[RMDB]
Notes
This 177-nucleotide RNA was probed chemically with DMS and 2A3. The data come from the RNA Mapping Database (RMDB), library TTRDES. Conditions: 150 mM KOAc, 10 mM MgCl2 and 150 mM bicine (pH 8.5), 24 C. High 2A3 reactivity points to a flexible backbone, as in loops and unpaired stretches. For 2A3, 3,530 sequencing reads were counted.
RNA sequence: GGGAACGACUCGAGUAGAGUCGAAAAGAUAUGGACGUCACAAGCAUCGAUCUACACAUCGGAAACGAUGUAAGUAGGGAGCUUGGACGUCCUAAGUCAAAGGACUAAGACUUCGGUCUUAGUCCAACGUGUAGCUCACGUUCGCGUGAGCUACACGAAAAGAAACAACAACAACAAC
Reactivity to DMS in 0.01 (KOAc 150mM, MgCl2 10mM, bicine 150mM(pH8.5), 24C), signal-to-noise 1, nucleotides 027 to 126: g000a020u030a060u040g000g000a010c000g010u000c010a200c000a000a020g010c000a300u000c300g000a140u010c000u010a000c000a110c000a020u000c000g040g000a020a000a040c000g010a000u000g030u000a030a150g060u010a000g040g000g000a110g000c000u000u000g000g000a000c000g010u000c000c000u000a000a060g000u000c050a080a110a180g000g000a010c000u000a000a000g000a030c000u000u000c250g010g000u000c000u000u000a020g000u000c000c020a000a030
Reactivity to 2A3 in 0.01 (KOAc 150mM, MgCl2 10mM, bicine 150mM(pH8.5), 24C), signal-to-noise 2, nucleotides 027 to 126: g000a000u020a000u070g000g000a050c000g050u010c030a020c000a300a000g000c010a080u300c270g120a140u100c050u000a000c000a000c020a020u000c000g000g050a010a000a000c010g000a000u000g000u080a180a110g010u010a000g010g110g070a060g000c000u000u010g000g000a000c010g000u000c000c000u010a010a000g010u000c000a060a150a110g000g000a000c010u030a020a000g000a020c030u060u280c300g090g000u010c000u000u000a000g020u000c000c000a000a000